Description
The data come from the RNA Mapping Database (RMDB), library M2PK50. The record gives the reactivity of an RNA of 177 nucleotides to DMS and 2A3. Conditions: 150 mM KOAc, 10 mM MgCl2 and 150 mM bicine (pH 8.5), 24 C. For DMS, 6,679 sequencing reads were counted. DMS (dimethyl sulfate) methylates the pairing face of unpaired adenines and cytosines.
RNA sequence: GGGAACGACUCGAGUAGAGUCGAAAAUGUUUGCAAUUCGUUGCAAACAAACUACCGAGAACGUUGCUCGGUAUAAACAGCCAACCCUUGGAAACAAGGGAACUAUGGAACGCUUCGGCGUUCCAAACCUUAUGAAAGUAUUCGUACUUUCAUAAGGAAAAGAAACAACAACAACAAC
Reactivity to DMS in 0.01 (KOAc 150mM, MgCl2 10mM, bicine 150mM(pH8.5), 24C), signal-to-noise 6, nucleotides 027 to 126: u000g010u010u000u000g000c000a010a010u000u000c170g030u000u000g000c000a010a010a010c000a020a090a100c190u000a010c010c010g000a010g000a100a190c270g010u010u010g010c000u000c010g000g010u000a000u000a020a070a110c200a120g000c050c050a120a110c000c000c000u010u000g000g000a150a130a210c010a000a010g010g000g000a030a020c110u000a090u000g010g000a010a010c010g010c000u000u020c190g020g000c000g000u010u000c000c010a020a040a050
Reactivity to 2A3 in 0.01 (KOAc 150mM, MgCl2 10mM, bicine 150mM(pH8.5), 24C), signal-to-noise 4, nucleotides 027 to 126: u040g000u000u000u000g000c000a020a020u030u060c210g060u070u000g000c000a010a010a000c000a010a040a000c040u000a010c000c020g000a000g010a080a100c160g140u150u250g040c010u000c000g000g000u010a010u020a000a020a000c020a020g120c020c020a030a070c090c000c000u010u000g010g010a050a050a030c000a010a000g010g000g030a010a010c020u040a090u090g000g010a010a000c000g000c000u030u060c260g090g000c000g000u000u000c010c000a000a000a010